[RMDB]
RNA sequence: GGGAACGACUCGAGUAGAGUCGAAAAAGCUGUCACGUAAACAUAGCUUGCAAGGUUACUGCAUGCGCCGCUUCAUCCACUUAUAGGUGGUUUACGAUGGCCGACUGGAUUUUGAAAAGAAUCCGUGGUUGGUAUACUCAUGGGAGAUAUCACCAGAAGUAACACGUGUGUUCGCACACGUGUUACUAAAAGAAACAACAACAACAAC
Reactivity to 2A3 in 0.01 (KOAc 150mM, MgCl2 10mM, bicine 150mM(pH8.5), 24C), signal-to-noise 1, nucleotides 027 to 156: a000g160c060u060g010u080c000a000c010g000u040a040a020a020c050a080u170a090g040c010u000u010g000c040a070a110g110g020u110u140a090c080u020g010c000a020u020g000c010g030c030c050g040c050u000u090c060a060u030c050c020a030c030u080u180a100u080a180g010g000u030g000g000u060u000u000a010c050g050a150u010g010g000c010c040g070a050c130u170g000g000a000u000u000u070u070g060a050a060a040a050g000a000a000u000c020c000g020u030g000g000u090u140g030g010u020a010u030a040c010u010c090a260u300g020g220g000a010g000a000u000a000u010c000a010c030c000a010g070a110